RNA sequence: GGGAACGACUCGAGUAGAGUCGAAAAAAACUUGGGCUUUUGCCUGGGUGAGCUACGUGGAAGACAUCGUCAGGUGGGGAGUUUGGCUGGGGCGGCACAUCUGUUAAAUGAUAACACAGGUGUCCUACUGCUAGGUAUAAUUCGUUAUACCUAGCAGAAAAGAAACAACAACAACAAC
Reactivity to 2A3 in 0.01 (KOAc 150mM, MgCl2 10mM, bicine 150mM(pH8.5), 24C), signal-to-noise 9, nucleotides 027 to 126: a000a000a010c040u050u030g010g000g000c040u090u080u220u300g010c000c000u000g010g010g000u040g020a020g020c050u060a040c050g060u080g050g020a060a020g050a050c020a080u070c070g100u070c050a040g050g020u060g050g030g020g010a060g030u060u100u070g070g000c060u040g000g000g020g010c010g000g000c050a000c000a020u000c010u000g010u010u060a070a200a120u250g110a120u120a170a020c040a000c000a060g000g000u000g010u020c000c010u060a080
Reactivity to DMS in 0.01 (KOAc 150mM, MgCl2 10mM, bicine 150mM(pH8.5), 24C), signal-to-noise 8, nucleotides 027 to 126: a050a040a030c030u010u000g000g000g010c010u010u020u020u020g020c000c000u000g000g000g020u000g000a110g010c060u000a080c110g010u010g000g000a110a070g000a100c080a060u010c090g010u010c080a090g000g010u020g000g000g000g000a090g020u010u010u010g010g010c070u010g000g000g010g010c080g010g010c090a050c020a010u000c000u000g000u000u010a060a090a110u030g010a170u020a080a070c200a020c010a010g000g010u000g010u010c050c030u020a170